[RMDB]
RNA sequence: GGGAACGACUCGAGUAGAGUCGAAAACGUCGCAAUUUUCACGCUCGCGACCGCCCUGGGCGUGCCGGGUCAGAACACCACGAACCACAUCGCGAUGUAGUGGCAGAUCGCCGCCACCGCGGUGCAGCACAUGUCACGUGUUCGCACGUGACAUGUGAAAAGAAACAACAACAACAAC
Reactivity to 2A3 in 0.01 (KOAc 150mM, MgCl2 10mM, bicine 150mM(pH8.5), 24C), signal-to-noise 3, nucleotides 027 to 126: c040g020u000c010g000c090a120a150u050u070u150u260c110a080c080g070c030u060c080g020c020g010a070c020c030g050c000c010c010u070g070g000g000c030g010u020g010c040c020g030g000g020u050c020a040g030a100a010c020a020c080c010a030c080g050a090a050c020c000a030c020a020u020c010g000c000g040a030u060g030u070a090g000u030g000g000c000a030g070a300u230c110g000c000c000g000c010c000a000c000c000g000c010g020g020u020g040c010a010g070
Reactivity to DMS in 0.01 (KOAc 150mM, MgCl2 10mM, bicine 150mM(pH8.5), 24C), signal-to-noise 3, nucleotides 027 to 126: c110g000u010c060g010c070a100a090u010u000u000u000c080a080c170g020c060u000c120g010c040g000a090c020c080g000c060c000c010u020g010g000g000c030g050u010g000c080c070g010g030g000u000c070a080g000a120a070c100a060c050c030a090c130g010a080a120c070c060a190c040a040u000c000g020c010g020a010u000g010u010a080g010u010g010g010c010a130g000a080u000c180g010c020c020g030c010c020a010c000c000g000c000g010g030u010g000c130a060g020

Structure probing data (2A3 and DMS) for a 177-nucleotide construct. The RNA was probed in 150 mM KOAc, 10 mM MgCl2 and 150 mM bicine (pH 8.5) at 24 C. High DMS reactivity at an A or C suggests that its Watson-Crick edge is free.